[RMDB]
RNA sequence: GGGAACGACUCGAGUAGAGUCGAAAACAGGCUGUGGGCUUAAACUGAAGGUUGACUACCGCCCUAUUGGGUUGUAUGCUGGUGUGGUGGUGGCCCCUGGUCUGGGGACACUGCCUGAUGUGGUGCGGCCCACAUAACUCUUCGGAGUUAUGUGGGCAAAAGAAACAACAACAACAAC
Reactivity to DMS in 0.01 (KOAc 150mM, MgCl2 10mM, bicine 150mM(pH8.5), 24C), signal-to-noise 1, nucleotides 027 to 126: c110a110g010g040c050u040g020u000g000g000g000c040u010u000a050a120a070c060u000g010a110a140g010g000u000u000g000a160c080u000a070c060c070g000c010c010c030u000a090u000u040g010g000g000u000u000g010u000a040u000g010c020u000g010g010u020g010u000g020g050u000g010g010u000g010g000c010c010c010c010u000g000g010u000c140u000g000g010g010g020a020c010a030c030u000g000c000c040u000g000a090u000g000u000g000g020u010g000c090g020